An RNA of 177 nucleotides, treated with DMS and 2A3 and read out base by base. The DMS profile rests on 1,496 reads. It was measured as part of the RMDB library OK2TST. Reactivities are rounded to 0.1 and cut off at 0 and 3. The RNA was probed in 150 mM KOAc, 10 mM MgCl2 and 150 mM bicine (pH 8.5) at 24 C.
[RMDB]
RNA sequence: GGGAACGACUCGAGUAGAGUCGAAAAGGACUGGAGCUGGCUUCCUGGAUUGAAGCGCGUCUGGGACGUAAGCCGUUAUGGUGUGGCGAUACCGGACCUGAGGUGGUCCAGCGCGUCGCCUGGUGCAGCGUUCUCGAAAUUUCGAUUUCGAGAACGCAAAAGAAACAACAACAACAAC
Reactivity to DMS in 0.01 (KOAc 150mM, MgCl2 10mM, bicine 150mM(pH8.5), 24C), signal-to-noise 1, nucleotides 027 to 126: g020g000a080c080u000g050g010a120g020c050u010g020g010c020u020u000c030c000u000g000g010a100u000u000g030a080a140g000c020g030c070g010u010c020u000g000g020g000a090c100g000u000a120a170g010c020c020g000u020u000a050u010g010g000u000g000u000g020g020c030g000a070u010a110c040c050g030g000a020c010c030u010g020a170g020g020u010g030g000u000c000c020a010g040c090g040c160g030u000c020g000c020c010u030g030g010u000g000c100a160
Reactivity to 2A3 in 0.01 (KOAc 150mM, MgCl2 10mM, bicine 150mM(pH8.5), 24C), signal-to-noise 1, nucleotides 027 to 126: g120g010a000c030u040g000g060a040g040c030u020g010g040c010u040u030c000c000u050g040g040a150u130u070g140a130a040g160c030g030c060g100u000c030u020g030g070g000a010c020g000u010a050a030g020c010c010g050u100u080a110u250g030g020u180g090u120g160g000c060g000a020u050a120c050c060g000g020a020c000c000u060g050a080g060g180u100g040g000u060c000c010a000g000c030g010c020g090u020c010g000c000c000u040g000g010u050g010c020a010